[RMDB]
RNA sequence: GGGAACGACUCGAGUAGAGUCGAAAAAGCCAAAAUCACCACCGCUUCUGCUACGAACAUGUUAAGCCAUCCUUUUAACCGUUGCUGCCACCACUAUUACGGCCAUCACAAGAAAAUUCAUGCAAGUAUCAUGACGUGCAUUCGUGCACGUCAUGAUAAAAGAAACAACAACAACAAC
Reactivity to DMS in 0.01 (KOAc 150mM, MgCl2 10mM, bicine 150mM(pH8.5), 24C), signal-to-noise 1, nucleotides 027 to 126: a060g010c010c000a040a080a080a090u040c100a090c080c000a130c060c000g020c020u000u000c000u000g010c260u020a000c070g000a020a030c040a070u150g070u050u000a150a090g130c050c000a010u000c040c130u000u020u000u040a050a100c090c040g030u000u000g040c000u020g000c000c000a090c010c010a140c270u000a030u000u000a120c050g000g000c000c030a030u000c190a090c000a040a120g000a100a000a030a040u000u000c040a000u030g060c000a150a010g010u000
Reactivity to 2A3 in 0.01 (KOAc 150mM, MgCl2 10mM, bicine 150mM(pH8.5), 24C), signal-to-noise 3, nucleotides 027 to 126: a000g020c010c000a030a000a000a050u060c030a010c040c000a020c000c020g030c000u070u010c020u060g020c020u020a070c080g040a080a050c050a080u140g020u060u100a060a020g040c040c010a050u070c000c000u170u130u030u090a050a100c040c050g050u010u080g020c010u030g030c020c000a000c010c010a000c020u050a090u060u100a030c080g000g090c000c010a110u140c020a000c010a040a010g220a080a070a090a020u150u090c090a010u090g070c090a040a000g030u020